[RMDB]
RNA sequence: GGGAACGACUCGAGUAGAGUCGAAAAACGCGAGGAUUCGUCCUCGCGUACAUAAGUGAGUUCGCCGGAUAGCUGCCUAAGUGAGAUCGCCGGAUAGCUGCCAAGCACAUAGUUUCGACUAUGUGAAGCAUCAUGUCAAAUUCGUUUGACAUGAUGCAAAAGAAACAACAACAACAAC
Reactivity to 2A3 in 0.01 (KOAc 150mM, MgCl2 10mM, bicine 150mM(pH8.5), 24C), signal-to-noise 3, nucleotides 027 to 126: a000c020g030c000g000a000g030g000a000u010u050c180g050u010c080c000u000c010g000c010g000u020a000c000a050u200a030a060g060u020g210a040g030u050u100c060g030c050c010g000g020a050u060a070g020c040u070g040c040c050u110a170a050g020u030g080a050g020a050u070c040g000c030c000g000g020a040u060a020g000c030u050g000c030c010a030a020g070c000a000c000a010u010a010g000u020u050u060c160g020a020c010u010a000u010g010u010g030a020a000
Reactivity to DMS in 0.01 (KOAc 150mM, MgCl2 10mM, bicine 150mM(pH8.5), 24C), signal-to-noise 4, nucleotides 027 to 126: a010c000g010c000g000a020g010g010a030u000u010c180g010u000c000c000u000c000g010c010g020u010a020c150a080u000a070a070g000u010g000a100g020u000u000c070g010c040c030g000g020a060u000a070g020c030u000g010c060c060u010a080a100g000u000g000a110g010a060u000c060g020c070c070g010g000a050u000a090g020c050u000g000c030c070a080a100g010c010a020c010a010u000a010g010u000u000u000c190g020a030c000u000a010u000g000u000g000a090a080
Chemical mapping of a 177-nucleotide RNA with 2A3 and DMS. As a SHAPE reagent, 2A3 marks flexible, mostly unpaired nucleotides at the ribose 2'-OH. The DMS profile rests on 3,889 reads. DMS adducts were read by reverse transcription with MarathonRT. Conditions: 150 mM KOAc, 10 mM MgCl2 and 150 mM bicine (pH 8.5), 24 C.